Background:
An RNA of 207 nucleotides, treated with 2A3 and read out base by base. For 2A3 the reverse transcriptase was SuperScript II with manganese.
RNA sequence: GGGAACGACUCGAGUAGAGUCGAAAAAGAUCGUUUACCGUGAAAAAAUUAGAGUGUUCAAAGCAGGCAGAUCCAAUUUUCUGCCACCGAAUACAUUAGCAUGGGAUAAUGGAAUAGGACCCUGUCCUCCUAUUUUCAGUUGGUUUGCCGCGAGGACGGAAACAUUGUCUUUCGAGACAAUGUUUCCAAAAGAAACAACAACAACAAC
Reactivity to 2A3 in 0.01 (KOAc 150mM, MgCl2 10mM, bicine 150mM(pH8.5), 24C), signal-to-noise 1, nucleotides 027 to 156: a000g030a150u050c020g000u040u000u010a040c000c010g000u000g000a100a230a060a080a090a080u280u240a130g030a030g030u140g000u000u070c040a100a080a130g020c220a290g020g000c000a000g000a000u000c070c080a110a140u080u070u000u000c000u000g000c000c000a010c010c010g090a000a020u140a070c030a100u130u120a030g030c040a000u110g050g000g020a030u080a160a010u170g000g070a040a030u030a100g030g070a090c010c030c030u030g010u000c000c000u000c010c030u030a100u050u060u090u080c100a030g000u030u000g070g090u080u070u060g030c010c010g010c010g000a030g010g000a000c000